Conditions: 150 mM KOAc, 10 mM MgCl2 and 150 mM bicine (pH 8.5), 24 C. This 207-nucleotide RNA was probed chemically with 2A3. Source: RMDB library M2RFPK, as collected in RNAgym.

RNA sequence: GGGAACGACUCGAGUAGAGUCGAAAAGUCCUGCCAUGAGACCGCAACGAGAGCAUGUCGCAUCGAAUGGACUCGGGGAGUCGGCAGCUCGCCCCACGGAUGAGCGCCUAAUGCCGGCAUUCGGGAAAAUAGACUGGAUAGUUCGCUAUCCAGUCAACCAAAAAAGUUGGUUCGCCAACUUUUUUGGAAAAGAAACAACAACAACAAC
Reactivity to 2A3 in 0.01 (KOAc 150mM, MgCl2 10mM, bicine 150mM(pH8.5), 24C), signal-to-noise 2, nucleotides 027 to 156: g030u020c000c020u010g030c010c000a090u070g030a020g030a070c050c140g020c040a060a090c100g110a040g020a020g220c090a110u150g030u090c020g000c020a050u030c030g030a030a040u040g010g020a050c010u020c030g050g010g000g000a100g010u000c010g000g000c000a010g000c010u000c010g030c000c000c020c050a060c070g030g010a160u130g000a040g010c020g050c010c020u040a100a030u100g000c000c000g020g000c010a000u060u050c020g020g000g100a040a040a020a050u150a040g000a010c000u000g010g000a000u000a000g030u050u030c210g000c110u000a000u010c000c000a000g000u000c000a000a000